[RMDB]
RNA sequence: GGGAACGACUCGAGUAGAGUCGAAAAGUCAACGGACCCGUCCCCCGGACGAGCAGGGAGGGUCCCGUCGGCGAGGUCAUCGCCGGCCUGCUGGUCAAGGACCCGCAGCGGCGCAUGUCGCUGCGGGAGGUGCGCAGGCACGUGCAGCCGCUGCUGCGGCUAGCUGGUGGUUCGCCACCAGCUAGCCAAAAGAAACAACAACAACAAC
Reactivity to 2A3 in 0.01 (KOAc 150mM, MgCl2 10mM, bicine 150mM(pH8.5), 24C), signal-to-noise 1, nucleotides 027 to 156: g040u020c050a010a010c000g000g000a000c000c030c040g300u170c060c000c000c010c010g110g090a200c110g030a180g050c050a050g000g000g000a020g090g010g000u060c020c090c000g050u070c050g000g000c020g000a060g040g060u180c080a060u050c190g030c070c000g030g040c000c000u000g000c000u050g000g080u090c060a160a040g020g090a080c000c000c010g000c000a000g000c000g020g000c040g000c060a120u300g000u010c020g010c030u000g010c000g020g040g010a000g020g010u170g000c020g000c010a000g050g000c020a040c060g060u080g000c000a000g010c050c030g000c080u200g010c010u030g020c000